[RMDB]
RNA sequence: GGGAACGACUCGAGUAGAGUCGAAAAUUGAAGAUCGGUCGCAGAACUAUGCGGGUCGGCAGGAUAGAAGUGUUUCGUCCGGCCUUGACGGGGUCCUGCUUCUUGACCGCCGUUCGCCGCGCGCCCUACUGGAGCGAGGAUUCGUCCUCGCUCCAGUAAAAGAAACAACAACAACAAC
Reactivity to 2A3 in 0.01 (KOAc 150mM, MgCl2 10mM, bicine 150mM(pH8.5), 24C), signal-to-noise 2, nucleotides 027 to 126: u060u100g060a020a000g050a060u050c040g040g030u120c040g010c040a010g020a050a020c040u010a120u300g040c030g030g040g040u040c000g000g000c000a040g030g000a050u140a050g050a090a060g030u060g130u070u120u040c040g010u030c080c010g010g000c000c000u020u120g070a050c020g000g000g000g000u000c040c060u040g020c000u040u000c000u040u070g130a080c000c000g000c000c000g080u040u000c200g000c040c020g000c000g010c000g000c010c000c000u000